Structure probing data (2A3 and DMS) for a 177-nucleotide construct. For DMS the reverse transcriptase was MarathonRT. Reactivities are rounded to 0.1 and cut off at 0 and 3. Reactivities are given for positions 27 through 126. For 2A3 the reverse transcriptase was SuperScript II with manganese. For DMS, 817 sequencing reads were counted.

RNA sequence: GGGAACGACUCGAGUAGAGUCGAAAAGCCACACGACCUUGGCCCCCACGGUCAAGCAUCCCUUCGGGAUCCUCGGUCGCAGUCAAUUCAGAGAAAUUUAUCAAGGUUGGCUGAGGCGCAUUUACGCCAGGCGAAUGACGUUCGCGUCAUUCGCCUGAAAAGAAACAACAACAACAAC
Reactivity to 2A3 in 0.01 (KOAc 150mM, MgCl2 10mM, bicine 150mM(pH8.5), 24C), signal-to-noise 1, nucleotides 027 to 126: g030c000c000a070c000a010c080g080a080c000c000u010u050g020g020c000c010c000c040c010a050c040g050g000u040c060a010a000g000c010a040u000c000c000c000u070u080c110g040g000g010a000u060c000c020u000c020g030g000u000c010g080c030a020g070u040c010a020a060u200u190c120a010g000a010g140a300a150a200u300u300u150a270u220c030a100a020g000g000u000u000g010g000c000u040g030a010g060g020c030g000c050a040u160u140u060a090c100g020c050
Reactivity to DMS in 0.01 (KOAc 150mM, MgCl2 10mM, bicine 150mM(pH8.5), 24C), signal-to-noise 1, nucleotides 027 to 126: g030c020c010a100c110a160c140g010a020c020c020u020u020g010g000c090c010c050c050c050a100c090g030g010u000c030a010a050g010c140a050u000c040c010c000u030u020c300g040g000g010a030u000c110c070u010c040g020g020u010c010g030c100a030g000u000c030a050a020u010u000c100a080g000a300g000a060a050a070u020u030u010a110u010c020a040a110g000g000u000u020g050g000c080u000g050a120g000g040c000g010c170a040u030u010u010a010c100g010c080